[RMDB]
RNA sequence: GGGAACGACUCGAGUAGAGUCGAAAACAUGCUUUCGAGCAUGAAAUUAUCCUAAGUCAAGUGAAGCAGAGAGGUCUUGGGAGUCGGAAACGACGAAGAACAAGACUACCCACCUCUGUGGAGGCUUGAUAUGGACAGAAAGAUACUUCGGUAUCAACUUAGUCAAUGGUUUCGACCAUUGACUAAGAAAAGAAACAACAACAACAAC
Reactivity to 2A3 in 0.01 (KOAc 150mM, MgCl2 10mM, bicine 150mM(pH8.5), 24C), signal-to-noise 5, nucleotides 027 to 156: c010a010u010g000c010u100u160u190c300g100a010g000c000a000u000g010a050a020a010u300u190a060u020c010c000u050a140a040g020u000c000a000a010g010u020g210a020a000g010c000a000g000a000g010a010g020g000u000c000u010u010g000g000g020a050g000u000c000g020g040a090a070a040c020g020a010c030g100a280a040g010a030a000c000a000a010g000a000c000u040a050c010c040c010a070c000c000u000c000u000g010u030g000g000a050g120g150c000u000u000g000a000u000a030u050g020g000a010c060a070g180a060a160a030g010a000u030a000c010u080u150c300g100g000u040a000u030c010a010a030
Reactivity to DMS in 0.01 (KOAc 150mM, MgCl2 10mM, bicine 150mM(pH8.5), 24C), signal-to-noise 2, nucleotides 027 to 156: c010a030u010g000c000u000u000u000c230g040a000g010c000a000u000g010a070a050a100u000u000a110u000c000c000u000a060a150g000u010c010a040a020g000u000g000a300a300g000c010a040g020a050g020a120g050g020u000c020u000u010g010g010g030a260g000u000c010g040g000a130a100a170c000g050a070c000g000a070a150g020a110a120c010a020a080g050a040c020u000a020c010c010c040a300c140c000u010c020u020g010u020g010g020a270g030g000c000u000u010g010a090u010a300u000g010g030a050c050a060g000a120a160a110g000a050u000a020c020u010u000c160g020g010u010a030u020c020a040a180
Chemical mapping of a 207-nucleotide RNA with 2A3 and DMS. 2A3 adducts were read by reverse transcription with SuperScript II with manganese. Source: RMDB library RNAMAK, as collected in RNAgym.